The record gives the reactivity of an RNA of 177 nucleotides to 2A3 and DMS.

RNA sequence: GGGAACGACUCGAGUAGAGUCGAAAAUUUAAGAGCGUAGAUGUCUCUGUCACGAUACGAGUAAGUGUCUCUCGUGUACUACUGACGAAUGAGACAGAGACAUUUAUGCUCAGUGUCAGUCAAGGAAUCCUUCCGUAUGGUUCGCCAUACGGAAGGAAAAAGAAACAACAACAACAAC
Reactivity to 2A3 in 0.01 (KOAc 150mM, MgCl2 10mM, bicine 150mM(pH8.5), 24C), signal-to-noise 1, nucleotides 027 to 126: u080u090u080a200a080g000a000g000c010g020u000a000g010a030u000g000u000c000u000c010u030g000u010c010a020c110g050a020u070a000c010g000a020g030u030a300a080g020u070g120u110c010u000c000u040c060g120u060g040u140a040c050u010a030c000u030g100a030c040g080a160a060u120g040a070g000a040c000a010g010a000g000a010c000a000u060u000u000a000u000g000c000u020c000a000g000u010g050u020c040a000g020u040c040a000a090g140g010a080a110
Reactivity to DMS in 0.01 (KOAc 150mM, MgCl2 10mM, bicine 150mM(pH8.5), 24C), signal-to-noise 2, nucleotides 027 to 126: u010u030u000a100a110g010a020g000c020g000u000a010g000a010u000g000u010c000u000c000u000g020u000c010a070c070g010a050u000a070c010g020a110g000u010a040a080g020u020g020u020c060u000c130u030c150g010u000g010u000a050c070u010a070c070u010g000a060c070g000a080a080u000g010a080g000a000c000a000g000a000g000a010c010a000u000u000u000a020u000g010c020u000c010a010g020u000g010u000c050a050g010u010c060a050a110g010g020a110a150
The 2A3 profile rests on 1,128 reads.
High 2A3 reactivity points to a flexible backbone, as in loops and unpaired stretches.
The reactions ran in a buffer of 150 mM KOAc, 10 mM MgCl2 and 150 mM bicine (pH 8.5), at 24 C.